[RMDB]
RNA sequence: GGGAACGACUCGAGUAGAGUCGAAAAGAUAUGGAUGGACACGACAUGCUUAUACCUUACUUGGAAAAAUAUCGGAAACGAUAUUUUUCCAAGUAAGGUAUCAAGCAACAGCGUGCCAUCCUAAGUCCGUUGUUGAUUACUUCGGUAAUCAACAACGAAAAGAAACAACAACAACAAC
Reactivity to DMS in 0.01 (KOAc 150mM, MgCl2 10mM, bicine 150mM(pH8.5), 24C), signal-to-noise 1, nucleotides 027 to 126: g000a150u000a300u000g000g000a020u000g000g000a240c000a010c000g000a090c160a260u010g020c000u000u000a020u000a000c000c000u000u000a000c000u000u000g000g000a000a000a000a080a000u000a000u000c010g000g000a120a090a210c000g020a010u000a000u000u000u000u000u000c000c000a020a000g000u000a010a000g000g000u000a000u000c150a000a000g000c010a000a050c270a160g000c000g020u010g000c000c000a000u000c000c000u000a020a110g000u000c030